[RMDB]
RNA sequence: GGGAACGACUCGAGUAGAGUCGAAAAGGCAGGACUUACCAAGUCUGGGGGCCGAUGAGGGUUGGCUCAAAGUAGGGUUUUGACUUGAAAACUCAAGCUGUGACCCCAUAACGAUGGAGGUAAAUGAAAAAUCCAUCUGCCUUCGGGCAGAUGGAAAGGUGUAUAAUUAGUUCGCUAAUUAUACACCAAAAGAAACAACAACAACAAC
Reactivity to 2A3 in 0.01 (KOAc 150mM, MgCl2 10mM, bicine 150mM(pH8.5), 24C), signal-to-noise 3, nucleotides 027 to 156: g030g020c030a010g000g000a030c010u030u090a090c080c080a070a020g050u040c040u090g020g000g020g020g000c040c100g050a020u060g050a090g070g040g000u050u030g020g000c020u040c100a080a070a000g070u090a070g010g010g040u020u020u100u060g060a070c000u020u030g060a070a070a060a070c040u010c030a000a040g000c020u030g050u100g130a070c010c010c000c000a040u070a140a020c090g050a030u070g020g060a050g040g030u080a090a150a090u180g110a060a030a010a000a030u000c020c000a000u000c000u000g010c000c000u010u040c040g010g010g010c010a000g000a000u000g000g030a000a000a010
Reactivity to DMS in 0.01 (KOAc 150mM, MgCl2 10mM, bicine 150mM(pH8.5), 24C), signal-to-noise 2, nucleotides 027 to 156: g000g020c050a120g020g040a060c050u000u000a110c110c030a110a200g000u010c020u000g000g010g000g020g020c000c040g000a080u000g010a090g020g010g000u010u000g010g000c030u000c040a060a050a110g010u000a050g010g000g000u000u000u000u000g010a080c050u010u020g000a070a060a090a130c160u000c020a030a040g000c010u010g030u010g000a140c000c010c020c030a070u000a100a100c060g000a120u000g010g010a080g020g000u000a040a070a110u000g000a020a070a040a100a170u000c000c000a020u010c000u000g030c000c040u000u020c300g040g050g030c010a000g000a030u000g010g000a020a000a050
This 207-nucleotide RNA was probed chemically with 2A3 and DMS. For DMS the reverse transcriptase was MarathonRT. 2A3 is a SHAPE reagent: it acylates the 2'-hydroxyl of flexible nucleotides of all four kinds. The data come from the RNA Mapping Database (RMDB), library M2RFPK. For 2A3, 2,514 sequencing reads were counted. Conditions: 150 mM KOAc, 10 mM MgCl2 and 150 mM bicine (pH 8.5), 24 C. Reactivities are given for positions 27 through 156. Reactivities are rounded to 0.1 and cut off at 0 and 3.